[RMDB]
RNA sequence: GGGAACGACUCGAGUAGAGUCGAAAAAGCCACAGGAGGUGCCGGAGAUCCAACCAGUGGUGGAAGAACAACCUUGUAGCCCCUGUGAUGAAGUCGUUGCAGAUCCACCACCCCUAACUGCGACGGAAUCCUGCUCAUCGUUCGCGAUGAGCAGGAUAAAAGAAACAACAACAACAAC
Reactivity to 2A3 in 0.01 (KOAc 150mM, MgCl2 10mM, bicine 150mM(pH8.5), 24C), signal-to-noise 2, nucleotides 027 to 126: a000g050c000c000a000c000a030g070g060a090g040g000u050g030c030c050g130g010a020g020a060u090c080c040a070a100c040c050a070g030u030g040g000u020g020g040a060a050g050a130a080c050a050a120c010c050u040u010g090u130a050g050c020c000c000c000u020g020u020g060a140u110g080a100a000g060u100c020g010u000u000g010c030a030g000a060u000c000c000a070c000c000a060c040c060c000c000u010a030a070c010u030g000c000g000a030c010g000g030a000
Reactivity to DMS in 0.01 (KOAc 150mM, MgCl2 10mM, bicine 150mM(pH8.5), 24C), signal-to-noise 1, nucleotides 027 to 126: a010g060c040c000a000c000a020g000g010a140g010g000u000g040c180c220g000g000a070g000a170u000c060c040a060a190c040c090a040g000u070g000g010u000g010g010a130a180g000a040a090c140a120a220c140c040u000u060g020u040a060g000c000c000c000c000u000g020u000g000a080u030g010a060a100g010u000c000g060u000u000g010c000a100g000a270u000c040c000a050c090c060a150c060c000c040c020u040a040a010c000u000g000c010g040a060c000g000g000a050
Annotation:
This 177-nucleotide RNA was probed chemically with 2A3 and DMS. It was measured as part of the RMDB library OK1LIB. The RNA was probed in 150 mM KOAc, 10 mM MgCl2 and 150 mM bicine (pH 8.5) at 24 C. For DMS, 1,305 sequencing reads were counted. 2A3 is a SHAPE reagent: it acylates the 2'-hydroxyl of flexible nucleotides of all four kinds.